[RMDB]
RNA sequence: GGGAACGACUCGAGUAGAGUCGAAAAUGAAGCAAAUCCAUAAUUGCCAAUGAUGAGCAAUUCGCUAUUGCCGCCUAAAAACGGUUAGCCGGGGCUGCUAGAGCCUUGGUACCAAAGAUAGCCGGCGUUACGGCAUGAUGGUUCGCCAUCAUGCCAACUGAUGUUGGAGAUUCGUCUCCAACAUCAGAAAAGAAACAACAACAACAAC
Reactivity to 2A3 in 0.01 (KOAc 150mM, MgCl2 10mM, bicine 150mM(pH8.5), 24C), signal-to-noise 5, nucleotides 027 to 156: u140g020a070a020g040c030a050a070a090u040c050c030a040u110a140a020u040u020g010c000c030a120a170u270g140a150u090g030a120g030c010a000a020u060u060c090g000c080u120a110u090u220g000c010c000g040c000c010u090a120a090a030a000a010c050g000g000u030u050a040g010c000c000g000g000g000g000c010u040g030c150u190a070g070a010g300c000c000u000u000g000g000u030a020c000c010a050a010a030g110a050u020a000g020c020c020g000g010c020g040u070u120a040c090g000g000c000a000u000g000a000u000g000g060u030u070c220g030c060c000a000u000c000a000u000g000c000c000a000a000
Reactivity to DMS in 0.01 (KOAc 150mM, MgCl2 10mM, bicine 150mM(pH8.5), 24C), signal-to-noise 1, nucleotides 027 to 156: u000g020a130a070g040c040a010a040a130u010c020c030a100u020a020a030u010u010g000c010c010a090a170u000g020a160u020g020a070g030c020a030a040u010u000c040g050c010u010a070u000u000g020c010c000g030c020c020u010a060a110a080a140a030c000g010g010u000u000a020g010c000c000g010g000g000g020c010u000g000c120u000a120g000a090g050c030c020u010u000g010g040u010a030c020c060a100a050a110g010a080u000a020g010c000c020g010g030c080g030u010u020a050c130g060g020c030a010u000g010a000u000g030g020u000u000c300g010c030c000a000u000c000a020u000g000c010c010a010a000